[RMDB]
Annotation
Chemical mapping of a 177-nucleotide RNA with 2A3 and DMS. The RNA was probed in 150 mM KOAc, 10 mM MgCl2 and 150 mM bicine (pH 8.5) at 24 C.
RNA sequence: GGGAACGACUCGAGUAGAGUCGAAAAAACGUUUAAGACAACACGUUAUUGGGCUUAACACCUUGAGUUUGUAGGCUUGUAUUUGCGGCACAAGGGCAAUAGCAAAUUUCAACAGCUACCAAAAAGCCUACUGAGGUCACUUCGGUGACCUCAGUAGAAAAGAAACAACAACAACAAC
Reactivity to 2A3 in 0.01 (KOAc 150mM, MgCl2 10mM, bicine 150mM(pH8.5), 24C), signal-to-noise 2, nucleotides 027 to 126: a000a000c180g010u130u060u010a120a090g180a020c010a020a040c010a080c120g000u050u050a090u040u030g120g010g000c020u040u040a060a010c000a030c080c020u030u130g060a020g040u130u070u220g000u150a000g000g080c000u050u010g010u040a010u010u020u020g000c000g040g030c000a030c020a160a110g060g080g000c020a050a120u000a010g000c040a000a130a000u250u300u100c090a060a050c000a110g010c020u100a050c020c000a000a090a090a000a000g070c000
Reactivity to DMS in 0.01 (KOAc 150mM, MgCl2 10mM, bicine 150mM(pH8.5), 24C), signal-to-noise 1, nucleotides 027 to 126: a040a000c010g000u000u000u000a160a000g000a110c300a070a010c160a000c120g000u000u000a070u010u000g030g000g000c000u000u000a130a160c120a100c050c000u000u040g030a080g010u000u000u000g010u040a040g000g000c060u000u000g050u070a070u030u040u050g000c010g000g020c050a040c140a040a100g000g020g000c190a070a010u040a110g030c060a000a000a090u000u000u020c110a090a000c270a000g020c010u000a110c040c040a110a050a190a140a080g010c120
2A3 adducts were read by reverse transcription with SuperScript II with manganese.